[RMDB]
RNA sequence: GGGAACGACUCGAGUAGAGUCGAAAAGUCGCAUCCUGGGGCUGGAGAAGGUCCCAAGGGUCCGGCUGUUCGCCGGUUAAAGCGGCACGCGAGCUGGGUUCAGAACGUCGCGAGACAGUUCGGUCCUUUCAGUAGAACGUUUCGACGUUCUACUGAAAAAAGAAACAACAACAACAAC
Reactivity to DMS in 0.01 (KOAc 150mM, MgCl2 10mM, bicine 150mM(pH8.5), 24C), signal-to-noise 3, nucleotides 027 to 126: g020u010c020g010c210a050u010c010c010u000g000g000g000g050c010u000g000g010a180g030a230a250g010g000u000c010c000c000a000a030g000g000g050u000c020c000g000g000c020u010g010u020u000c220g020c000c030g000g000u020u020a040a090a140g010c000g000g000c000a060c070g010c080g000a070g000c060u020g000g000g020u020u010c030a170g010a080a040c070g010u010c010g000c150g000a280g000a030c030a050g010u000u010c010g000g000u020c030c010u020
An RNA of 177 nucleotides, treated with DMS and read out base by base.
For DMS the reverse transcriptase was MarathonRT.
Conditions: 150 mM KOAc, 10 mM MgCl2 and 150 mM bicine (pH 8.5), 24 C.